[RMDB]
RNA sequence: GGGAACGACUCGAGUAGAGUCGAAAACUAUUUCGUACCGAGAUCCGUCACAGGUGCCCCUAGCUGAGUAGGCUAAGGCGUUUUAAGGUAAACUAGCUAAGGGAAAUCGGCAAAAUGGCCCCGUAACAGCAUUCGAAAAUUUCGAUUUUCGAAUGCUAAAAGAAACAACAACAACAAC
Reactivity to DMS in 0.01 (KOAc 150mM, MgCl2 10mM, bicine 150mM(pH8.5), 24C), signal-to-noise 2, nucleotides 027 to 126: c010u000a050u020u000u000c090g040u000a150c040c000g020a090g000a090u000c030c020g000u000c220a110c160a080g030g020u010g000c040c000c010c070u000a010g010c020u040g020a120g030u020a120g000g020c020u010a050a090g030g000c110g000u010u030u020u000a060a120g010g010u000a070a080a050c040u000a060g000c010u010a030a130g000g000g000a020a080a060u000c000g020g020c110a030a000a040a040u000g000g010c010c000c000c050g000u030a050a050c130
Reactivity to 2A3 in 0.01 (KOAc 150mM, MgCl2 10mM, bicine 150mM(pH8.5), 24C), signal-to-noise 4, nucleotides 027 to 126: c020u030a060u040u070u100c040g060u060a060c000c010g000a000g000a070u030c030c020g100u100c140a040c020a110g090g000u050g040c000c000c000c010u000a020g000c000u040g120a020g120u210a030g190g000c020u040a030a090g070g000c030g020u060u030u060u110a110a050g060g010u090a130a060a040c020u020a000g030c020u040a040a110g020g000g040a040a060a050u030c000g010g000c020a020a010a010a060u060g030g000c000c020c000c000g060u040a040a020c020